[RMDB]
RNA sequence: GGGAACGACUCGAGUAGAGUCGAAAAAGAUUUGGCUGAUUUAUACUCUUUGAUAGUCUAGAGAAAAGCGGCUUCAUUGGCCCAAUAAAUGUCCUGCGAAUAAAUUUAUGGCAACACGUUUAUGCCAGAUCCGCUGACUAUUCGUAGUCAGCGGAUCAAAAGAAACAACAACAACAAC
Reactivity to 2A3 in 0.01 (KOAc 150mM, MgCl2 10mM, bicine 150mM(pH8.5), 24C), signal-to-noise 2, nucleotides 027 to 126: a000g060a020u020u000u150g020g000c020u000g020a030u000u030u050a190u100a130c050u120c000u060u130u020g130a130u060a110g050u020c070u100a050g000a000g060a140a020a140a000g070c030g030g020c000u030u020c000a070u080u090g040g010c000c010c000a000a030u040a030a010a000u240g040u040c010c040u080g000c110g130a070a000u240a040a060a040u200u130u100a180u160g000g040c000a010a060c080a030c100g030u000u060u060a080u080g010c020c000a000

An RNA of 177 nucleotides, treated with 2A3 and read out base by base. The data come from the RNA Mapping Database (RMDB), library OK1LIB.